About this RNA
Source: RMDB library OK2TRN, as collected in RNAgym. This 177-nucleotide RNA was probed chemically with DMS and 2A3. The DMS profile rests on 5,234 reads. The 2A3 profile rests on 4,485 reads.
[RMDB]
RNA sequence: GGGAACGACUCGAGUAGAGUCGAAAAGAGAGGAUGCUGGCGAGGUCACCUUUAGCCUGGGCAACUCCCGUACCACUACGCUUCUCAGAGUAAAAUGUGAGGGCAGGAAGGCCUCUGGACAGGCGAGUGUAUGCACACUAUUCGUAGUGUGCAUACAAAAAGAAACAACAACAACAAC
Reactivity to DMS in 0.01 (KOAc 150mM, MgCl2 10mM, bicine 150mM(pH8.5), 24C), signal-to-noise 5, nucleotides 027 to 126: g010a070g010a060g010g010a110u000g030c070u000g020g030c080g010a090g020g000u000c070a130c060c060u000u010u010a140g030c020c040u010g000g010g000c040a060a120c060u000c000c020c020g000u010a120c070c040a100c100u010a090c140g010c050u000u000c030u010c030a050g000a060g000u000a060a070a130a130u000g000u000g000a060g000g000g010c020a060g000g000a080a080g010g000c040c010u000c020u000g010g000a080c090a050g010g000c030g010a120g020
Reactivity to 2A3 in 0.01 (KOAc 150mM, MgCl2 10mM, bicine 150mM(pH8.5), 24C), signal-to-noise 2, nucleotides 027 to 126: g090a000g000a030g060g000a060u090g030c060u060g000g060c040g010a030g000g020u150c040a110c080c000u020u080u080a020g010c000c010u000g020g040g000c030a030a050c020u020c000c000c000g010u040a060c000c030a030c070u140a040c040g000c020u210u130c020u050c050a050g030a040g100u140a020a060a050a090u150g050u040g060a060g000g010g020c010a000g030g050a060a040g070g030c000c010u010c060u040g070g050a040c030a040g010g020c000g020a030g040